[RMDB]
RNA sequence: GGGAACGACUCGAGUAGAGUCGAAAAGCGGAGGAGACGGCGCAGGCUGUUCCUGCCCGCGUUUUCCGUCGUGCCGCUAAGAUUGCCCAGUCGGGGGAGUCUGCGGAUUUCGCCCAGGUUGAGGUGACUAAGGAUAACUCUUCGGAGUUAUCCUUAGAAAAGAAACAACAACAACAAC
Reactivity to 2A3 in 0.01 (KOAc 150mM, MgCl2 10mM, bicine 150mM(pH8.5), 24C), signal-to-noise 2, nucleotides 027 to 126: g010c000g010g010a040g040g090a120g000a030c020g000g030c040g000c010a000g000g030c030u080g070u240u180c020c020u040g010c000c000c020g010c020g000u030u030u130u040c000c000g000u010c000g020u100g080c010c000g010c010u010a020a020g060a130u040u160g040c000c000c010a010g070u050c060g010g000g010g000g000a010g010u000c000u020g010c070g080g000a020u060u140u050c100g080c000c000c000a040g050g010u040u050g040a060g000g000u040g000a030
Reactivity to DMS in 0.01 (KOAc 150mM, MgCl2 10mM, bicine 150mM(pH8.5), 24C), signal-to-noise 6, nucleotides 027 to 126: g010c010g000g000a270g010g010a220g010a010c000g000g010c110g010c030a040g000g000c120u000g000u000u010c050c040u000g000c030c000c020g010c010g010u010u000u010u000c010c000g000u000c030g010u010g010c010c000g000c010u010a100a080g010a100u000u000g010c000c010c000a160g010u010c120g010g010g010g000g000a040g010u000c000u000g020c080g020g000a070u000u000u010c050g010c010c000c010a130g000g000u000u000g000a110g010g010u000g010a190